[RMDB]
RNA sequence: GGGAACGACUCGAGUAGAGUCGAAAACUUCCAAAAAUCAGGUUAUAGUAAAUAUGUCACUGUUCAGGGACCACCUGGCACUGGCAAAAGUCAUUUUGCUAUAGGGUUAGCGAUUUACUACCCUACACACGUACCGGGUUCGCCCGGUACAAAAGAAACAACAACAACAAC
Reactivity to 2A3 in 0.01 (KOAc 150mM, MgCl2 10mM, bicine 150mM(pH8.5), 24C), signal-to-noise 3, nucleotides 027 to 129: c040u030u030c040c000a000a040a040a000a080u200c120a040g150g010u150u100a020u020a020g030u030a000a030a040u120a040u070g000u020c010a010c030u030g020u230u270c020a000g010g050g090a280c050c030a130c000c050u020g000g000c030a000c020u000g000g000c000a010a030a020a000g120u050c110a050u000u000u010u080g000c000u000a020u040a080g020g020g050u040u050a010g050c100g040a100u060u020u130a030c000u030a050c000c000c010u020a020c080a000c000a000c060
Reactivity to DMS in 0.01 (KOAc 150mM, MgCl2 10mM, bicine 150mM(pH8.5), 24C), signal-to-noise 4, nucleotides 027 to 129: c160u000u000c000c140a040a150a040a130a090u060c110a040g000g010u050u000a200u040a030g050u010a010a040a020u020a060u000g010u010c050a070c090u000g010u080u080c040a040g000g010g050a210c200c110a150c070c040u040g020g040c050a030c090u000g000g000c040a020a010a030a130g000u080c140a080u030u010u000u000g030c080u010a060u030a030g000g000g000u030u000a000g000c120g010a090u000u000u000a070c030u030a050c090c010c000u020a040c240a070c110a030c230

An RNA of 170 nucleotides, treated with 2A3 and DMS and read out base by base. Conditions: 150 mM KOAc, 10 mM MgCl2 and 150 mM bicine (pH 8.5), 24 C. For DMS the reverse transcriptase was MarathonRT. The 2A3 profile rests on 9,727 reads. For 2A3 the reverse transcriptase was SuperScript II with manganese. The DMS profile rests on 8,896 reads.